The record gives the reactivity of an RNA of 207 nucleotides to 2A3 and DMS.
Source: RMDB library OK3TST, as collected in RNAgym.
For DMS, 5,012 sequencing reads were counted.

RNA sequence: GGGAACGACUCGAGUAGAGUCGAAAAGAGACUGAGAGGUCAUGCAUGAGGGCCACUUCUCUGGGUUGUCCCCACAACACGGGCGGUGUCCCUGGGACACGUGGAAGGGGAGGGGCAGCUCACUGCUGACAUCUCCUUCUGCAGGCCUGGAGGAGGACUAAAUGCAUAUGUUCGCAUAUGCAUUUAGAAAAGAAACAACAACAACAAC
Reactivity to 2A3 in 0.01 (KOAc 150mM, MgCl2 10mM, bicine 150mM(pH8.5), 24C), signal-to-noise 4, nucleotides 027 to 156: g080a000g010a020c070u080g020a020g020a010g130g030u040c040a060u140g050c040a090u150g050a100g000g050g010c010c020a060c030u020u000c010u000c010u020g040g000g000u040u140g010u030c000c000c060c020a080c030a050a050c050a030c060g040g050g000c170g120g100u130g020u140c000c010c020u070g000g040g000a010c010a000c050g010u020g030g000a000a010g000g010g010g010a040g000g020g080g000c010a010g010c000u090c120a230c120u110g000c000u000g010a040c010a080u020c010u000c000c000u010u000c000u020g010c000a020g030g040c010c000u010g000g010a010g010g000a010g000g010a000
Reactivity to DMS in 0.01 (KOAc 150mM, MgCl2 10mM, bicine 150mM(pH8.5), 24C), signal-to-noise 2, nucleotides 027 to 156: g020a130g000a110c040u000g010a110g010a130g030g020u000c050a100u010g010c060a130u010g010a110g020g010g000c020c000a070c030u000u000c000u000c020u010g000g010g030u000u000g000u000c000c000c010c050a160c090a050a090c100a100c040g020g040g030c080g030g020u010g030u010c010c030c110u010g000g010g000a040c000a060c090g040u000g020g020a080a050g000g010g010g030a010g010g020g020g030c000a030g020c030u000c230a100c130u010g020c000u000g000a060c010a060u000c000u000c000c000u000u010c020u000g000c020a300g000g000c000c010u020g020g000a040g020g000a020g030g000a280
Description:
The reactions ran in a buffer of 150 mM KOAc, 10 mM MgCl2 and 150 mM bicine (pH 8.5), at 24 C. For DMS the reverse transcriptase was MarathonRT.